An RNA of 207 nucleotides, treated with DMS and 2A3 and read out base by base.
RNA sequence: GGGAACGACUCGAGUAGAGUCGAAAAAUCAUUGUGAGAUGUGCAAUGUUCUUGCAUCGAAAAGCCAUUGUGCAUAUUGCCCACCAGUAGCUCCAGCUACUGCUAGAUAAUAAGUACCACUAGAUGGAGCAGAGAAAUCACUACCUAGAGAAGUACACAUGACAUCAGUAUUCGUACUGAUGUCAUGAAAAGAAACAACAACAACAAC
Reactivity to DMS in 0.01 (KOAc 150mM, MgCl2 10mM, bicine 150mM(pH8.5), 24C), signal-to-noise 4, nucleotides 027 to 156: a160u000c040a110u000u000g020u000g000a090g030a070u000g010u010g000c020a050a010u000g010u000u010c040u010u010g030c040a190u000c180g020a080a070a070a090g000c300c020a040u010u000g030u010g000c020a050u000a070u000u010g000c020c030c020a090c120c010a050g030u010a020g000c020u020c160c150a140g040c020u000a020c010u010g000c060u000a030g010a100u000a060a090u000a060a090g010u000a060c010c030a300c010u010a050g020a050u000g020g010a060g030c030a130g000a100g000a120a060a110u010c030a060c030u000a010c010c020u000a080g000a130g010a070a090g010u000a040c040a210
Reactivity to 2A3 in 0.01 (KOAc 150mM, MgCl2 10mM, bicine 150mM(pH8.5), 24C), signal-to-noise 7, nucleotides 027 to 156: a000u080c030a050u110u080g030u050g070a110g010a050u020g020u010g000c010a010a020u010g020u080u170c040u030u040g050c050a250u130c170g130a120a110a010a000g000c030c000a010u010u020g000u010g020c010a010u030a080u060u160g040c010c010c010a040c000c010a010g010u020a010g000c020u070c130c090a050g000c000u010a000c000u000g010c010u020a030g010a070u070a130a030u080a120a020g040u020a040c010c020a040c080u030a010g010a080u050g050g040a030g010c050a010g070a010g050a070a110a020u090c030a030c080u060a070c010c010u020a020g000a000g020a190a030g030u040a020c060a000